[RMDB]
RNA sequence: GGGAACGACUCGAGUAGAGUCGAAAAAUGGCAACCUAGUGAUAGAAUCGGAAGAUUUCGAGAAAUUUAACGCUAUACUUGAUUCUUUAUUGAGUGGCGUGCGAGCGGGUAUUAGUUUUGGUUGGUUAUUAAACGCACAAAUGGCCGCUGUUAAGCGCAGCUUGAGACAAUUCGUUGUCUCAAGCUGAAAAGAAACAACAACAACAAC
Reactivity to 2A3 in 0.01 (KOAc 150mM, MgCl2 10mM, bicine 150mM(pH8.5), 24C), signal-to-noise 3, nucleotides 027 to 156: a020u070g020g000c040a060a030c020c010u060a050g030u040g100a070u050a120g130a060a070u020c030g050g050a000a120g000a100u080u110u090c090g030a060g150a050a160a090u160u190u130a110a000c030g020c030u030a030u040a230c010u050u010g010a020u080u110c080u170u260u230a110u090u050g030a020g020u030g010g010c030g000u030g020c020g010a030g000c030g020g000g010u050a050u100u090a090g060u050u010u130u070g070g020u040u050g030g020u010u000a030u000u130a050a110a000c050g000c080a020c020a100a030a030u030g050g020c000c040g030c020u020g060u160u080a110a050g020c030g000
Reactivity to DMS in 0.01 (KOAc 150mM, MgCl2 10mM, bicine 150mM(pH8.5), 24C), signal-to-noise 3, nucleotides 027 to 156: a080u010g030g010c010a070a110c030c010u000a070g040u010g000a160u000a100g010a080a100u010c050g010g030a150a220g010a110u000u010u000c020g000a150g010a090a090a090u000u000u000a070a070c010g020c010u000a050u010a080c020u000u000g000a060u000u010c210u000u010u010a050u020u010g010a070g050u010g020g010c010g000u010g000c070g000a060g000c080g010g010g030u000a070u010u000a070g010u000u000u010u010g030g010u000u000g020g010u000u000a080u010u000a030a050a080c080g010c050a120c050a050a060a090u010g010g020c030c040g000c020u000g000u000u000a070a140g020c070g020